[RMDB]
RNA sequence: GGGAACGACUCGAGUAGAGUCGAAAACGAUGAGAUCAUCACCUCCACCACCAGCAACUAUGAGACCCAGACUUUCUCAUCCAAGACUGAGUGGAGGGUCAGGGCCAUCUCUGCUGCCAACCUGCACGUUUAAUCCCGGUUUCGACCGGGAUUAAACAAAAGAAACAACAACAACAAC
Reactivity to 2A3 in 0.01 (KOAc 150mM, MgCl2 10mM, bicine 150mM(pH8.5), 24C), signal-to-noise 5, nucleotides 027 to 126: c070g040a060u130g040a030g050a160u110c020a010u040c020a030c020c000u000c000c010a030c040c010a060c010c010a030g010c010a030a070c040u110a010u100g020a020g030a060c020c030c080a060g040a130c060u080u160u040c010u010c020a060u020c060c020a130a060g140a230c040u050g010a010g040u040g000g030a010g010g040g000u020c050a040g020g000g000c010c000a040u010c030u010c030u080g050c010u050g020c020c020a050a060c030c010u040g010c070a030c130
Reactivity to DMS in 0.01 (KOAc 150mM, MgCl2 10mM, bicine 150mM(pH8.5), 24C), signal-to-noise 2, nucleotides 027 to 126: c240g060a160u000g000a100g000a040u070c010a040u020c020a130c000c000u040c040c000a080c000c100a070c120c020a000g000c110a170a130c150u010a010u030g000a020g000a080c190c000c140a080g010a030c180u050u000u000c000u010c020a050u000c160c120a010a010g000a050c080u010g000a050g010u000g050g000a020g040g000g050u000c170a090g000g000g000c090c110a050u010c040u000c050u010g010c020u000g040c080c000a040a050c010c000u000g000c160a130c100
The record gives the reactivity of an RNA of 177 nucleotides to 2A3 and DMS.
The reactions ran in a buffer of 150 mM KOAc, 10 mM MgCl2 and 150 mM bicine (pH 8.5), at 24 C.
Source: RMDB library OK1LIB, as collected in RNAgym.